This 177-nucleotide RNA was probed chemically with 2A3 and DMS. The RNA was probed in 150 mM KOAc, 10 mM MgCl2 and 150 mM bicine (pH 8.5) at 24 C. For 2A3 the reverse transcriptase was SuperScript II with manganese.
[RMDB]
RNA sequence: GGGAACGACUCGAGUAGAGUCGAAAACUAUUUCGGCUUACCUAUCUUCGUGGGUCCGGUUCGAUCCGCGCGGUCAGAAUGUCUCAAUUCGAGUAAUCAAUUGUGCAGUUCUAGCAGCGAGCGGCAGUAGCUAGGGAGGAUUCGUCCUCCCUAGCUAAAAAGAAACAACAACAACAAC
Reactivity to 2A3 in 0.01 (KOAc 150mM, MgCl2 10mM, bicine 150mM(pH8.5), 24C), signal-to-noise 4, nucleotides 027 to 126: c090u090a200u020u070u060c000g010g000c000u020u080a080c040c010u100a080u080c080u110u070c040g030u060g000g020g020u010c000c040g100g010u050u080c010g000a080u040c000c010g040c000g000c010g030g040u060c000a010g010a060a040u030g110u030c030u010c050a020a030u050u040c100g040a020g020u170a060a200u080c020a010a020u030u070g010u030g020c030a060g050u040u020c020u020a040g010c020a000g000c020g060a010g010c020g050g000c050a070g090
Reactivity to DMS in 0.01 (KOAc 150mM, MgCl2 10mM, bicine 150mM(pH8.5), 24C), signal-to-noise 3, nucleotides 027 to 126: c110u010a090u000u000u030c050g010g000c070u020u020a070c050c030u010a110u010c050u020u030c090g040u030g010g030g000u010c010c100g010g040u010u000c150g010a120u020c000c030g010c010g000c070g020g030u000c050a050g020a020a030u010g010u040c030u010c000a040a000u000u010c150g010a030g010u070a150a090u010c020a020a040u000u000g010u020g010c040a030g040u020u000c000u010a070g020c080a060g010c050g000a080g000c030g000g030c220a080g000